[RMDB]
RNA sequence: GGGAACGACUCGAGUAGAGUCGAAAACGUGCAUGCCCCACGACGUGGUGUCUAGCGGUCGUCCGGCGGCACGGGCGCCGAUCGCGGUGCCGGCGAUCCGCGCCUGGUAUUUGCCUUGGUGGGUCAGGUUCCCCUCACAUUUCGAUGUGAGGGGAACAAAAGAAACAACAACAACAAC
Reactivity to 2A3 in 0.01 (KOAc 150mM, MgCl2 10mM, bicine 150mM(pH8.5), 24C), signal-to-noise 1, nucleotides 027 to 126: c040g020u060g030c030a080u150g000c000c000c070c000a010c040g040a000c070g090u110g080g040u110g140u130c080u090a040g090c060g040g050u020c020g040u060c080c070g020g030c000g050g030c110a020c000g020g000g010c040g000c030c000g030a040u040c030g000c050g030g120u120g090c050c010g050g010c000g010a000u000c040c010g000c020g010c000c000u000g010g010u000a190u080u120u240g000c020c000u030u080g020g000u120g030g030g000u040c020a050g000
Reactivity to DMS in 0.01 (KOAc 150mM, MgCl2 10mM, bicine 150mM(pH8.5), 24C), signal-to-noise 1, nucleotides 027 to 126: c090g010u040g010c080a140u010g010c080c000c010c120a010c030g010a080c040g040u010g020g020u010g010u000c090u000a120g010c030g030g020u010c010g000u010c020c150g030g030c030g000g010c070a040c030g000g000g000c000g010c040c180g020a040u000c000g020c010g040g020u010g020c090c070g000g000c000g000a010u010c000c170g000c020g030c000c010u000g010g000u000a070u010u000u010g040c010c000u000u020g020g030u010g000g000g000u020c110a100g000

Structure probing data (2A3 and DMS) for a 177-nucleotide construct. Source: RMDB library OK2TRN, as collected in RNAgym. The DMS profile rests on 1,609 reads.